An RNA of 177 nucleotides, treated with DMS and 2A3 and read out base by base. The 2A3 profile rests on 29,008 reads. For DMS, 18,107 sequencing reads were counted. 2A3 adducts were read by reverse transcription with SuperScript II with manganese. It was measured as part of the RMDB library TTRDES. The RNA was probed in 150 mM KOAc, 10 mM MgCl2 and 150 mM bicine (pH 8.5) at 24 C. Reactivities are given for positions 27 through 126.
[RMDB]
RNA sequence: GGGAACGACUCGAGUAGAGUCGAAAAGAUAUGGAAUCCCACACGGGAGCUCGCGAUCGGAAACGAUCGAGUGGAGCUUUGAUCGUGUUGGGAUUCCUAAGUCAAAACGGAUAGGUUCGCCUAUCCGCUGAGAUACAAAGUUCGCUUUGUAUCUCAGAAAAGAAACAACAACAACAAC
Reactivity to DMS in 0.01 (KOAc 150mM, MgCl2 10mM, bicine 150mM(pH8.5), 24C), signal-to-noise 8, nucleotides 027 to 126: g010a040u000a300u010g010g010a010a000u000c000c000c000a020c010a010c000g000g000g020a010g030c000u000c000g010c010g010a000u000c000g010g000a140a110a210c000g010a010u000c000g010a030g010u010g010g000a010g040c000u000u000u010g010a090u010c000g020u000g000u000u010g020g010g000a010u000u000c000c000u000a010a070g010u010c040a100a050a120a300c010g000g000a010u000a010g000g020u000u010c290g010c010c000u000a000u000c000c000g020
Reactivity to 2A3 in 0.01 (KOAc 150mM, MgCl2 10mM, bicine 150mM(pH8.5), 24C), signal-to-noise 6, nucleotides 027 to 126: g010a010u070a030u180g000g000a000a010u000c000c040c000a000c010a000c000g120g040g030a020g010c000u000c000g010c010g000a010u010c010g020g000a080a050a040c010g010a010u010c020g010a020g120u300g270g030a010g020c000u160u060u070g050a060u070c010g000u010g080u230u200g010g000g000a000u010u000c000c000u000a010a010g010u000c030a020a010a090a110c020g000g000a000u000a000g030g050u070u070c300g110c080c000u000a000u010c000c000g000